[RMDB]
RNA sequence: GGGAACGACUCGAGUAGAGUCGAAAAGAAACGAUGCUGGAAAAAUAUUACGAAAGGGAGAAAGCGCGAAUCCCUGAAAGCGCGAAAGUAAUAUGAAAUGUCGGAAAAACGAUCAGCUUCGGAGAAAGGCUUAUGAUUUGUUCGCAAAUCAUAAGCCAAAAGAAACAACAACAACAAC
Reactivity to DMS in 0.01 (KOAc 150mM, MgCl2 10mM, bicine 150mM(pH8.5), 24C), signal-to-noise 2, nucleotides 027 to 126: g000a190a080a040c000g000a040u010g040c000u000g010g000a010a160a090a120a100u000a010u000u000a000c000g040a180a050a070g000g020g010a120g000a050a080a080g020c040g000c010g000a060a120u000c000c000c020u000g000a110a050a100g000c030g000c000g000a040a030a100g000u000a040a000u000a000u010g020a030a070a160u030g000u000c040g000g000a080a090a030a200a140c010g040a040u000c020a000g000c000u000u000c010g000g030a140g000a140a060a100
Reactivity to 2A3 in 0.01 (KOAc 150mM, MgCl2 10mM, bicine 150mM(pH8.5), 24C), signal-to-noise 2, nucleotides 027 to 126: g100a000a040a010c020g000a000u020g000c000u000g000g030a060a030a000a000a000u030a000u000u000a000c000g020a090a020a110g150g030g000a240g030a180a090a000g050c000g000c010g010a030a100u030c010c000c000u000g060a120a100a000g030c000g030c010g010a000a040a010g000u000a010a000u020a000u010g040a180a140a190u250g010u070c050g050g020a190a100a100a180a000c000g000a010u040c000a020g000c000u000u000c020g000g000a060g090a040a100a000